About this RNA:
Conditions: 150 mM KOAc, 10 mM MgCl2 and 150 mM bicine (pH 8.5), 24 C. Chemical mapping of a 207-nucleotide RNA with DMS and 2A3. The DMS profile rests on 1,839 reads. DMS adducts were read by reverse transcription with MarathonRT. It was measured as part of the RMDB library M2RFPK.
RNA sequence: GGGAACGACUCGAGUAGAGUCGAAAAGGAGCGACAAGAAUUUAGCUUGAGAUAGCUAAAUCACCUCGGUAUGAUUAGGGUGAGACCUAGGAACCGUAGGGGUAUUCUCAAAGGAAGCUUUUGCAGUGAAGGAAGAUACGAUUCGUCGUAUCUUCAACGCGCAUAUACAGUUCGCUGUAUAUGCGCGAAAAGAAACAACAACAACAAC
Reactivity to DMS in 0.01 (KOAc 150mM, MgCl2 10mM, bicine 150mM(pH8.5), 24C), signal-to-noise 1, nucleotides 027 to 156: g020g050a040g040c090g030a160c030a010a060g010a060a010u010u000u000a040g040c010u010u000g010a280g000a200u010a010g010c000u000a010a020a010u010c000a040c010c020u000c020g030g020u000a160u010g000a130u010u000a030g000g010g010u000g030a190g000a110c000c000u000a070g000g010a090a010c030c010g010u000a100g020g000g010g010u000a030u010u000c030u000c090a030a120a050g000g020a070a180g000c030u010u010u010u000g030c020a060g060u000g000a140a070g010g050a040a010g000a020u000a000c000g010a150u000u030c200g010u000c000g020u000a010u000c000u000u000c000a050a050
Reactivity to 2A3 in 0.01 (KOAc 150mM, MgCl2 10mM, bicine 150mM(pH8.5), 24C), signal-to-noise 2, nucleotides 027 to 156: g050g030a050g030c010g060a060c050a070a020g090a120a000u020u030u010a000g000c000u020u020g010a020g000a050u150a030g000c000u010a010a000a000u010c000a010c000c010u030c040g020g000u270a200u120g030a030u040u060a000g000g030g000u040g080a100g070a040c000c000u010a010g030g000a000a050c000c000g000u050a030g000g050g000g000u030a060u130u060c050u010c000a050a050a000g090g010a030a020g030c020u030u070u140u230g070c090a030g000u040g160a100a030g130g010a000a000g020a000u000a000c010g010a040u030u080c190g030u040c000g000u060a000u010c000u000u010c000a000a000